[RMDB]
RNA sequence: GGGAACGACUCGAGUAGAGUCGAAAAUCAGCUUGUUCGCAAGCUGAAAAAACCGUAGGUCGAGUCACAGCUUUUGACGCGAUAGUGUUCGAAAGAGCACGAAUCGCGAUAAGCUGUACUCGACCUAAACGGAAAAACGCUCAGUUCGCUGAGCGAACUCACUUUCGAGUUUCGACUCGAAAGUGAGAAAAGAAACAACAACAACAAC
Reactivity to DMS in 0.01 (KOAc 150mM, MgCl2 10mM, bicine 150mM(pH8.5), 24C), signal-to-noise 1, nucleotides 027 to 156: u020c010a010g000c000u000u000g020u000u030c240g010c020a020a000g000c000u020g000a000a090a050a050a040a080c030c000g020u000a060g000g040u010c000g010a040g030u000c180a010c000a020g000c010u000u000u000u010g050a260c040g010c000g010a020u000a150g010u000g000u000u000c010g000a180a230a300g020a040g030c000a000c010g020a110a060u000c000g000c020g000a070u000a040a020g030c000u000g040u000a010c010u010c000g010a000c010c000u010a030a000a060c020g000g000a100a030a110a130a140c030g000c000u010c000a050g020u000u010c260g000c030u000g020a000g010c010g010a000a070
Reactivity to 2A3 in 0.01 (KOAc 150mM, MgCl2 10mM, bicine 150mM(pH8.5), 24C), signal-to-noise 2, nucleotides 027 to 156: u000c010a000g000c020u050u030g020u140u170c240g030c100a000a000g000c000u000g020a010a000a000a000a010a030c010c000g010u020a010g000g010u000c000g000a000g000u030c190a000c010a030g010c010u010u090u090u200g240a110c020g010c000g010a000u020a000g010u010g040u010u000c020g020a080a050a050g000a010g010c000a000c020g020a130a160u000c000g010c000g010a000u010a000a000g000c000u000g000u000a000c000u000c000g000a000c000c000u000a010a000a000c000g000g070a000a070a110a020a010c020g000c000u000c000a040g020u220u120c210g040c070u000g030a020g000c020g010a020a030
Source: RMDB library RNAMAK, as collected in RNAgym. This 207-nucleotide RNA was probed chemically with DMS and 2A3. For DMS, 2,706 sequencing reads were counted. High 2A3 reactivity points to a flexible backbone, as in loops and unpaired stretches. For 2A3, 2,727 sequencing reads were counted.